[RMDB]
Chemical mapping of a 207-nucleotide RNA with DMS and 2A3. Values cover nucleotides 27 to 156. The data come from the RNA Mapping Database (RMDB), library OK3TST. The reactions ran in a buffer of 150 mM KOAc, 10 mM MgCl2 and 150 mM bicine (pH 8.5), at 24 C. DMS (dimethyl sulfate) methylates the pairing face of unpaired adenines and cytosines.
RNA sequence: GGGAACGACUCGAGUAGAGUCGAAAAGGAUUUGUUGAGGACUUUGAACCUAAGCGUGAAAGAUUUUUGUCUGUUUACAUUGUGACUGUUAGGUCUUCAGUAAUUGAGGUAACUACUGCUGAGGAGAAGUUGUCUUCUAUUUGGGGUGAUUUAGAGGGAAUGAUAGUGUUUUCGAACACUAUCAUUCAAAAGAAACAACAACAACAAC
Reactivity to DMS in 0.01 (KOAc 150mM, MgCl2 10mM, bicine 150mM(pH8.5), 24C), signal-to-noise 4, nucleotides 027 to 156: g010g010a110u000u000u000g010u010u000g010a100g020g010a060c030u020u020u000g010a080a100c030c030u010a100a090g030c060g020u000g020a110a090a080g020a090u010u000u010u010u010g020u000c030u000g020u010u000u000a080c050a130u000u000g030u000g020a080c060u000g030u010u000a080g020g020u000c010u010u010c010a060g020u000a040a090u010u000g010a120g030g020u010a050a070c060u000a060c040u000g010c040u000g000a090g000g000a090g010a070a120g020u010u010g010u000c020u000u000c040u000a130u010u000u000g030g010g020g030u000g010a070u000u010u000a080g010a140g010g010
Reactivity to 2A3 in 0.01 (KOAc 150mM, MgCl2 10mM, bicine 150mM(pH8.5), 24C), signal-to-noise 9, nucleotides 027 to 156: g050g000a080u060u070u150g030u040u050g020a030g000g030a030c020u100u080u100g040a040a030c010c020u030a070a030g040c030g040u060g060a050a080a050g050a110u100u100u070u180u220g040u020c050u020g120u030u070u030a070c050a090u090u140g030u050g080a040c030u040g050u100u050a040g010g010u000c000u030u040c030a020g020u060a090a090u070u110g040a030g010g030u030a040a040c020u060a010c030u070g010c020u030g030a020g010g030a040g000a050a050g030u050u060g010u030c000u040u010c030u050a130u060u090u120g030g000g000g010u060g030a050u050u060u060a050g030a040g040g060